[RMDB]
RNA sequence: GGGAACGACUCGAGUAGAGUCGAAAACCUGCAGACCAUUCGUGGUCUGCAGGCAUUAGACCUUUGUGGUAUGUCUACAACAGCCACGUCCCAUUGGGACGGGACAUGUAGAAUACCACUCUGGUAGGCGGCAAGUGUAUCUUCGGAUACACUUGAAGCCUUCUCCCCUUUUCGAAGGGGAGAAGGCAAAAGAAACAACAACAACAAC
Reactivity to 2A3 in 0.01 (KOAc 150mM, MgCl2 10mM, bicine 150mM(pH8.5), 24C), signal-to-noise 4, nucleotides 027 to 156: c000c000u000g000c000a010g000a000c000c010a040u090u090c270g080u090g000g000u000c000u000g000c000a000g010g000c000a000u090u220a110g050a040c000c000u030u000u030g050u020g060g000u020a010u060g300u000c010u010a020c000a120a020c020a110g080c000c040a300c070g010u010c000c010c050a170u140u300g000g000g000a000c000g000g000g030a050c020a060u080g000u000a000g000a000a000u000a000c000c000a000c000u010c030u000g050g020u050a130g070g150c170g060g000c000a000a000g010u010g000u000a000u010c010u040u160c300g130g010a000u000a000c000a000c000u000u010g000a010a000
Reactivity to DMS in 0.01 (KOAc 150mM, MgCl2 10mM, bicine 150mM(pH8.5), 24C), signal-to-noise 1, nucleotides 027 to 156: c010c000u000g100c000a060g000a010c000c000a160u000u000c190g050u010g020g000u000c000u000g000c000a020g020g040c000a030u000u000a060g010a050c000c010u010u010u020g010u000g020g030u010a000u000g040u010c010u000a020c010a040a030c050a200g040c000c000a010c000g050u010c000c000c000a300u000u000g050g050g020a010c000g000g000g000a020c000a300u030g020u000a000g010a090a040u000a000c000c010a010c000u000c000u000g030g020u000a060g020g000c070g000g030c020a010a010g030u000g010u000a010u000c010u000u010c300g060g000a000u000a010c000a010c000u000u000g000a080a240
Conditions: 150 mM KOAc, 10 mM MgCl2 and 150 mM bicine (pH 8.5), 24 C. This 207-nucleotide RNA was probed chemically with 2A3 and DMS. DMS adducts were read by reverse transcription with MarathonRT. The DMS profile rests on 2,794 reads. For 2A3 the reverse transcriptase was SuperScript II with manganese.